[RMDB]
RNA sequence: GGGAACGACUCGAGUAGAGUCGAAAAGAUGAGAAUACGUGACUUGGUCAGAGGCGGAAAGCCACAAGCACGAACGAUUCAGUAGAGUAUCGAGCCGCCAACAGAUGCACGUUGUGAUCGUGCUAGACCUACGGGAGGUGUUCGCACCUCCCGUAGGAAAAGAAACAACAACAACAAC
Reactivity to DMS in 0.01 (KOAc 150mM, MgCl2 10mM, bicine 150mM(pH8.5), 24C), signal-to-noise 2, nucleotides 027 to 126: g000a110u040g010a120g020a060a000u040a070c030g050u000g000a090c030u000u020g000g080u040c130a090g000a070g040g000c000g000g020a080a060a050g000c060c000a110c050a060a040g020c000a020c070g000a210a070c110g000a100u000u000c000a010g000u020a080g000a060g010u000a040u040c010g000a130g000c000c000g030c050c030a030a050c250a130g030a170u000g000c030a060c020g000u000u040g050u070g000a020u030c030g000u040g000c000u000a020g000a300
Reactivity to 2A3 in 0.01 (KOAc 150mM, MgCl2 10mM, bicine 150mM(pH8.5), 24C), signal-to-noise 2, nucleotides 027 to 126: g070a180u140g020a030g040a040a110u050a140c000g030u010g060a130c000u010u000g070g000u130c200a060g090a150g260g000c000g000g280a230a000a050g000c030c000a000c000a000a000g040c000a000c030g000a030a080c040g000a000u000u020c000a010g080u190a100g000a000g010u110a060u090c010g000a000g000c000c000g010c090c000a070a000c000a010g090a090u140g020c000a000c000g030u040u100g130u000g120a060u090c010g010u010g000c010u060a000g060a070